[RMDB]
RNA sequence: GGGAACGACUCGAGUAGAGUCGAAAAGAUAUGGAUCCAUUCGAACCGAUAAGCUGUCAAUCGGAAACGAUUGCAGCUUUUGACGGUUCGAUGGAUCCUAAGUCAAAGUGAGGGUUCGCCCUCACAACUCUCCUGUAGACUUCGGUCUACAGGAGAGAAAAGAAACAACAACAACAAC
Reactivity to 2A3 in 0.01 (KOAc 150mM, MgCl2 10mM, bicine 150mM(pH8.5), 24C), signal-to-noise 2, nucleotides 027 to 126: g020a010u030a000u140g010g000a020u000c040c020a060u300u300c030g000a020a000c000c070g140a070u050a300a000g000c030u020g300u300c100a000a000u000c000g060g000a060a010a010c010g030a020u010u010g030c020a000g030c020u000u020u000u000g010a000c050g040g020u000u020c010g010a010u000g010g000a000u000c000c000u000a000a000g000u000c050a260a070a000g030u000g000a010g000g040g060u090u250c300g250c020c010c010u030c000a000c000a000a020
Reactivity to DMS in 0.01 (KOAc 150mM, MgCl2 10mM, bicine 150mM(pH8.5), 24C), signal-to-noise 2, nucleotides 027 to 126: g000a020u010a300u000g000g000a000u000c000c000a000u000u020c020g010a020a030c000c040g020a200u000a000a020g070c000u020g010u000c020a000a000u000c000g030g000a070a070a170c000g010a000u000u010g020c030a010g010c000u020u000u000u000g010a230c120g020g000u000u000c000g000a000u000g010g000a000u000c000c000u020a000a070g010u020c000a140a100a140g000u010g000a000g000g000g000u000u000c300g010c020c000c000u000c000a000c010a050a100